[RMDB]
RNA sequence: GGGAACGACUCGAGUAGAGUCGAAAAGAUAUGGAGCGAACUACAGCCGCCCAGCAACAGCUCGGAAACGAGACAUGCUGUAACAAGCUGCGCUCCUAAGUCAAAGUACCUUCUUCGGAAGGUACAAGACUUUCAACUACUUCGGUAGUUGAAAGUCAAAAGAAACAACAACAACAAC
Reactivity to DMS in 0.01 (KOAc 150mM, MgCl2 10mM, bicine 150mM(pH8.5), 24C), signal-to-noise 2, nucleotides 027 to 126: g020a070u020a300u020g010g000a000g000c010g000a120a030c130u010a300c040a000g000c030c060g010c300c180c000a040g040c010a010a040c240a190g000c000u000c000g020g010a070a110a120c000g000a050g030a040c110a180u000g000c000u000g000u000a030a090c120a160a150g000c000u000g000c010g000c020u000c010c020u000a000a040g010u000c030a080a100a090g020u000a000c000c000u000u000c000u000u000c130g040g000a030a000g030g010u000a000c000a050a130
Reactivity to 2A3 in 0.01 (KOAc 150mM, MgCl2 10mM, bicine 150mM(pH8.5), 24C), signal-to-noise 2, nucleotides 027 to 126: g030a060u050a010u150g000g000a010g020c010g020a080a080c090u210a070c300a000g040c020c010g010c080c060c000a000g000c010a020a120c030a100g090c000u000c000g000g000a080a110a030c010g000a010g040a040c020a090u120g040c000u000g060u180a140a110c070a100a040g000c010u010g000c020g020c000u000c000c000u020a080a020g020u000c010a080a000a100g000u000a020c000c000u010u060c010u010u060c160g120g010a000a000g000g000u010a010c000a000a000